[RMDB]
RNA sequence: GGGAACGACUCGAGUAGAGUCGAAAACGUCAAACGGUUACUUCCGAGGUGAGGUCUUCGUCAUUUAUCGGCCUGGAAGGCGUUGCAGAUGCUAUGUCUUGGCAAAAACUGAUAAGACAAUGAUAGGGCCUAUUCCAGGCUUCGGCCUGGAAUAGGCAAAAGAAACAACAACAACAAC
Reactivity to 2A3 in 0.01 (KOAc 150mM, MgCl2 10mM, bicine 150mM(pH8.5), 24C), signal-to-noise 1, nucleotides 027 to 126: c000g060u120c060a170a000a000c100g050g030u130u090a040c000u020u000c000c070g050a000g000g080u080g140a110g020g030u070c000u190u020c070g070u080c000a120u140u050u090a120u010c000g120g000c000c000u030g000g100a000a000g000g000c000g040u000u080g000c000a040g040a280u300g000c000u060a080u040g000u000c000u000u010g000g000c000a050a110a000a000a000c050u040g040a070u080a110a110g000a050c040a060a000u240g050a160u170a120g160g000
Record summary
The record gives the reactivity of an RNA of 177 nucleotides to 2A3. The RNA was probed in 150 mM KOAc, 10 mM MgCl2 and 150 mM bicine (pH 8.5) at 24 C. Reactivities are rounded to 0.1 and cut off at 0 and 3.